[RMDB]
RNA sequence: GGGAACGACUCGAGUAGAGUCGAAAAUGGCGGGUUAGAUGAAUCUAAUCCAUGGUCAUCCACUUUAUAAAUACAUAAAAGGACAGUUUUAUGAUUGUCAGCUUUGAGUUGAGGAUAUGUUCCAGACACUUAAUGGAGACUUCGGUCUCCAUUAAGUAAAAGAAACAACAACAACAAC
Reactivity to DMS in 0.01 (KOAc 150mM, MgCl2 10mM, bicine 150mM(pH8.5), 24C), signal-to-noise 2, nucleotides 027 to 126: u010g030g030c190g000g010g010u000u010a010g010a060u020g010a150a110u000c000u000a020a000u000c010c000a040u010g000g020u020c010a070u010c040c020a060c060u000u000u010a060u000a050a110a090u020a090c020a020u000a090a010a010a030g010g000a030c020a020g010u000u000u000u010a120u030g010a020u000u000g020u000c020a090g010c010u000u000u000g000a120g020u000u000g000a040g000g000a110u000a070u000g000u000u000c010c010a130g010a240c240
Reactivity to 2A3 in 0.01 (KOAc 150mM, MgCl2 10mM, bicine 150mM(pH8.5), 24C), signal-to-noise 2, nucleotides 027 to 126: u050g040g000c070g020g000g060u050u000a000g000a060u100g190a160a260u000c000u020a000a000u000c010c020a020u120g090g000u000c000a010u010c010c010a040c020u090u140u010a210u080a090a190a010u070a000c000a010u110a050a040a010a000g030g050a030c010a030g020u000u000u070u240a210u260g040a070u010u060g000u000c070a040g100c020u010u010u030g050a030g010u010u000g030a020g030g000a010u050a040u260g060u040u000c010c000a030g020a070c070